[RMDB]
RNA sequence: GGGAACGACUCGAGUAGAGUCGAAAAAAUGUUCUGUUGGUCAGUGCAGCGUUUGCUUUCGUCUUGUCCAUGCUCUUCAUCUGAGCUGGCUGGGGAAAGCGGAAUGACUGGUAGUACCUGAACUCCCGUUAGAUUGAAACUUCGGUUUCAAUCUAACAAAAGAAACAACAACAACAAC
Reactivity to 2A3 in 0.01 (KOAc 150mM, MgCl2 10mM, bicine 150mM(pH8.5), 24C), signal-to-noise 4, nucleotides 027 to 126: a000a010u200g000u040u000c050u040g280u250u170g010g010u000c050a060g100u030g300c010a010g010c010g010u020u020u030g010c010u030u000u010c060g300u040c110u070u050g050u070c000c000a050u240g000c000u010c020u090u100c050a280u050c070u090g000a000g000c000u000g000g000c010u000g010g000g000g000a000a010a010g010c010g000g030a060a040u030g150a300c000u010g070g030u020a030g010u020a030c020c020u020g000a010a020c010u000c010c000c000
Reactivity to DMS in 0.01 (KOAc 150mM, MgCl2 10mM, bicine 150mM(pH8.5), 24C), signal-to-noise 2, nucleotides 027 to 126: a080a060u010g000u000u000c020u000g010u020u000g020g000u000c060a160g010u010g000c010a010g010c020g040u010u000u000g010c000u010u010u000c010g020u010c020u000u010g010u020c000c000a020u020g010c000u000c000u000u000c300a110u010c300u000g010a010g010c010u000g000g010c010u010g000g000g000g000a010a010a010g000c020g010g020a010a010u000g000a140c000u000g010g000u000a140g010u020a040c010c020u010g000a030a040c020u000c000c000c010